The record gives the reactivity of an RNA of 177 nucleotides to 2A3 and DMS. For 2A3 the reverse transcriptase was SuperScript II with manganese. High 2A3 reactivity points to a flexible backbone, as in loops and unpaired stretches. The reactions ran in a buffer of 150 mM KOAc, 10 mM MgCl2 and 150 mM bicine (pH 8.5), at 24 C.
RNA sequence: GGGAACGACUCGAGUAGAGUCGAAAAGAUAUGGAAUAGUCGAGGCGACGGUAAUACUCGGAAACGAGUGCCAGUCGCUCGAGCUAUUCCUAAGUCAAAGUUUCCUCUACUUCGGUAGAGGAAACAAGUCUAAGAUAAUGUUCGCAUUAUCUUAGACAAAAGAAACAACAACAACAAC
Reactivity to 2A3 in 0.01 (KOAc 150mM, MgCl2 10mM, bicine 150mM(pH8.5), 24C), signal-to-noise 6, nucleotides 027 to 126: g010a010u090a030u140g000g010a010a010u010a000g020u040c020g040a100g090g260c010g000a010c010g000g020u100a240a100u090a300c000u000c000g030g010a050a060a030c000g000a010g000u010g000c010c020a040g010u000c000g000c010u000c000g010a010g000c000u000a000u000u010c000c000u010a080a010g030u020c060a160a030a040g000u000u000u000c000c000u000c000u000a010c000u020u070c210g070g000u000a000g000a010g000g000a000a000a000c000a000a010
Reactivity to DMS in 0.01 (KOAc 150mM, MgCl2 10mM, bicine 150mM(pH8.5), 24C), signal-to-noise 6, nucleotides 027 to 126: g000a050u000a300u010g010g000a020a000u000a010g010u000c010g010a120g020g010c000g000a020c010g000g020u010a050a060u010a090c000u000c000g000g000a120a090a160c000g010a000g050u000g010c000c000a100g030u000c000g010c000u000c000g000a060g010c000u010a010u000u000c000c000u000a020a080g010u010c050a080a090a140g000u000u000u000c000c000u000c000u000a000c000u000u020c200g020g010u000a000g010a010g000g000a000a000a000c000a040a080